[RMDB]
RNA sequence: GGGAACGACUCGAGUAGAGUCGAAAAGAUAUGGAGGAUCAAAGGCCGAUAAGAGUGUAUCGGAAACGAUACAACUCUUUUGACGGCUGAUGAUCCUCCUAAGUCAAAAGGGGAGGUUCGCCUCCCCCAAGUUGGAGAAGUUCGCUUCUCCAACUUGAAAAGAAACAACAACAACAAC
Reactivity to DMS in 0.01 (KOAc 150mM, MgCl2 10mM, bicine 150mM(pH8.5), 24C), signal-to-noise 5, nucleotides 027 to 126: g010a040u000a300u010g000g010a030g000g000a020u000c010a010a070a300g000g000c000c000g010a160u010a020a010g000a020g030u000g000u000a010u010c000g020g020a140a070a170c000g010a010u000a000c000a020a110c000u000c000u000u000u000u010g020a210c130g000g010c010u000g010a300u000g010a000u000c000c000u000c000c000u000a000a050g000u000c040a070a050a100a170g010g000g010g010a020g010g010u010u020c300g010c010c000u000c000c010c000c020
Reactivity to 2A3 in 0.01 (KOAc 150mM, MgCl2 10mM, bicine 150mM(pH8.5), 24C), signal-to-noise 2, nucleotides 027 to 126: g010a000u090a040u180g000g000a010g020g000a000u010c010a030a050a030g000g000c050c040g050a030u060a110a000g000a000g010u000g000u010a000u000c000g020g050a080a030a010c040g000a000u000a010c020a080a240c010u000c000u000u010u020u080g160a070c070g010g000c010u000g000a000u000g000a000u010c000c000u000c010c000u020a010a010g000u010c000a040a010a000a120g000g000g020g010a030g000g070u180u240c300g180c060c000u000c000c000c000c010
Structure probing data (DMS and 2A3) for a 177-nucleotide construct. Values are in units of 0.01, from 0 to 300, in steps of 10. The reactions ran in a buffer of 150 mM KOAc, 10 mM MgCl2 and 150 mM bicine (pH 8.5), at 24 C.